An RNA of 207 nucleotides, treated with 2A3 and DMS and read out base by base. For DMS, 2,816 sequencing reads were counted. The 2A3 profile rests on 1,434 reads. Conditions: 150 mM KOAc, 10 mM MgCl2 and 150 mM bicine (pH 8.5), 24 C.
[RMDB]
RNA sequence: GGGAACGACUCGAGUAGAGUCGAAAACAUGUAUGUCUCCUGCCCAGGUAGAGGGGACAUAACCCAGGACCUUGAGAGCAUCCUGACCCUUCCAGUCUCUGAGCUGUGUGUGACUCUCCCUUGCCUUGCCUUUUGUCAAGACUUCCUAGGCACAUCACUAAUGACCUCAGUUCGCUGAGGUCAUUAGAAAAGAAACAACAACAACAAC
Reactivity to 2A3 in 0.01 (KOAc 150mM, MgCl2 10mM, bicine 150mM(pH8.5), 24C), signal-to-noise 2, nucleotides 027 to 156: c070a110u190g060u140a010u020g000u020c020u010c020c020u080g060c020c060c010a080g050g080u140a100g060a020g070g010g000g030a010c000a000u040a000a080c050c010c010a020g090g040a040c030c090u140u210g010a030g000a000g120c010a020u020c000c060u040g040a090c020c000c010u060u040c020c040a050g020u030c040u010c060u150g020a040g030c040u000g010u020g020u020g050u030g160a090c010u000c000u020c020c030c000u020u050g020c000c000u010u050g050c010c000u060u090u100u050g120u100c040a010a050g020a070c000u020u040c020c020u020a010g000g080c050a020c010a060u140c010a010
Reactivity to DMS in 0.01 (KOAc 150mM, MgCl2 10mM, bicine 150mM(pH8.5), 24C), signal-to-noise 1, nucleotides 027 to 156: c040a090u020g020u000a040u030g010u000c000u020c000c030u000g050c070c030c080a180g030g000u000a070g000a110g000g020g000g020a040c010a030u000a010a140c080c050c030a180g030g000a080c040c010u000u000g000a120g030a120g020c260a090u000c040c060u000g000a200c030c000c040u000u000c040c030a090g000u000c040u000c020u000g000a090g010c030u010g000u000g010u000g020u000g000a100c060u010c030u000c040c020c000u000u010g010c000c040u040u000g040c020c080u000u000u000u000g030u000c020a080a060g000a050c010u000u010c020c010u000a150g030g040c050a060c050a090u010c000a160